Structure probing data (DMS and 2A3) for a 177-nucleotide construct.
DMS adducts were read by reverse transcription with MarathonRT.
The DMS profile rests on 13,447 reads.
It was measured as part of the RMDB library M2PK50.
For 2A3, 21,187 sequencing reads were counted.
Conditions: 150 mM KOAc, 10 mM MgCl2 and 150 mM bicine (pH 8.5), 24 C.
RNA sequence: GGGAACGACUCGAGUAGAGUCGAAAACCUCCAAACUUCGGUUUGGAGGAAAAGGAGCCAAAAUAAGAACGGAAAGGGAAGACGGAACCCAAGUCUAUUAAAAAAGUACCAUGUUCGCAUGGUACAACAUAAUGGAAAUGUUCGCAUUUCCAUUAUGAAAAGAAACAACAACAACAAC
Reactivity to DMS in 0.01 (KOAc 150mM, MgCl2 10mM, bicine 150mM(pH8.5), 24C), signal-to-noise 8, nucleotides 027 to 126: c000c000u000c000c000a000a010a010c000u000u020c190g040g010u000u000u000g010g000a020g000g000a010a010a060a100g000g010a100g010c030c040a070a050a080a100u000a070a080g010a090a110c100g000g000a040a050a100g000g000g000a060a050g010a040c050g000g000a080a090c030c030c030a070a100g000u010c060u010a110u010u010a010a050a060a070a060a080g010u000a010c010c000a020u000g000u000u010c190g020c000a000u000g000g000u000a000c000a030a100
Reactivity to 2A3 in 0.01 (KOAc 150mM, MgCl2 10mM, bicine 150mM(pH8.5), 24C), signal-to-noise 8, nucleotides 027 to 126: c000c000u000c000c000a000a010a010c000u040u070c180g080g000u000u000u010g010g010a030g000g000a020a030a000a010g050g010a020g060c010c020a040a040a010a090u220a080a040g080a090a020c050g020g070a070a040a030g040g010g000a030a040g040a030c040g030g030a040a050c010c000c010a010a010g040u000c040u060a160u130u300a160a120a040a020a010a010g000u000a000c000c000a000u010g010u030u050c160g000c110a000u000g000g000u000a000c000a000a000